Chemical mapping of a 177-nucleotide RNA with DMS and 2A3. For 2A3, 1,133 sequencing reads were counted. For DMS, 754 sequencing reads were counted.
[RMDB]
RNA sequence: GGGAACGACUCGAGUAGAGUCGAAAACGUGCUCUCUUCGGAGAGCACGAAAGAUAGCACAAAGCACCAAAUAAAGGAGGUGCAGGGUGCAACCACCAAUAAAAAGAAGUAGGUUCGCCUACUUCAACUAAGCCUGUAGGUUCGCCUACAGGCUUAGAAAAGAAACAACAACAACAAC
Reactivity to DMS in 0.01 (KOAc 150mM, MgCl2 10mM, bicine 150mM(pH8.5), 24C), signal-to-noise 1, nucleotides 027 to 126: c060g030u000g000c040u000c000u000c040u000u000c090g030g000a070g000a000g000c020a000c010g020a020a060a030g000a120u010a130g020c000a000c000a130a130a110g010c000a090c000c010a020a200a160u020a100a040a160g000g000a300g010g010u000g020c010a050g000g040g010u000g010c000a110a070c000c000a090c160c080a040a040u060a020a050a040a100a090g020a010a020g000u000a000g000g040u000u040c240g020c000c000u000a000c000u000u000c000a020a040
Reactivity to 2A3 in 0.01 (KOAc 150mM, MgCl2 10mM, bicine 150mM(pH8.5), 24C), signal-to-noise 1, nucleotides 027 to 126: c000g000u000g030c000u010c000u000c000u010u020c130g080g010a010g000a000g000c000a000c000g020a000a010a010g040a000u050a000g000c030a000c000a020a180a000g000c000a000c010c030a090a100a090u300a080a260a000g180g030a080g020g050u030g000c040a010g010g000g000u000g000c000a000a010c020c050a030c010c060a090a050u210a230a150a020a020a060g000a000a000g000u000a000g090g010u030u060c220g150c020c000u030a020c000u000u000c010a000a000